[RMDB]
An RNA of 177 nucleotides, treated with DMS and 2A3 and read out base by base. Reactivities are given for positions 27 through 126. The data come from the RNA Mapping Database (RMDB), libraries RFM100 and RFMREP. The RNA was probed in 150 mM KOAc, 10 mM MgCl2 and 150 mM bicine (pH 8.5) at 24 C.

RNA sequence: GGGAACGACUCGAGUAGAGUCGAAAAGCUAUCUGUAUCCUCGUCUUGUUUAAAGGCUUGUGAUAUGCUGUGGUAGUUGGGUUGCAGAAGUGCGAUAUUAAAGUAAAAGCCAUGAGUCUUUUAGGCCAAAUGACAUAGAUUUCGAUCUAUGUCAUUUAAAAGAAACAACAACAACAAC
Reactivity to DMS in 0.01 (KOAc 150mM, MgCl2 10mM, bicine 150mM(pH8.5), 24C), signal-to-noise 9, nucleotides 027 to 126: g010c010u000a020u010c030u010g010u000a020u000c010c000u000c120g010u000c010u000u000g010u030u030u050a080a030a030g010g000c010u000u000g010u030g010a030u000a010u000g020c180u010g020u010g010g010u000a020g010u000u000g000g010g020u000u000g010c040a040g000a100a080g010u010g010c030g010a070u010a070u010u010a060a070a120g010u010a050a050a070a090g000c030c040a090u010g000a100g010u010c010u000u000u000u000a070g010g010c070c120
Reactivity to 2A3 in 0.01 (KOAc 150mM, MgCl2 10mM, bicine 150mM(pH8.5), 24C), signal-to-noise 9, nucleotides 027 to 126: g020c000u020a020u060c040u070g030u020a010u010c010c000u000c010g030u000c020u060u180g200u280u270u300a100a040a010g010g000c000u010u010g030u070g050a040u020a020u120g050c090u090g020u070g060g010u010a030g010u040u090g100g020g000u030u080g020c020a010g010a130a010g080u040g050c020g020a020u010a050u140u200a120a080a040g070u070a050a070a030a000g010c020c020a060u080g030a020g070u070c030u030u110u020u080a060g040g000c010c010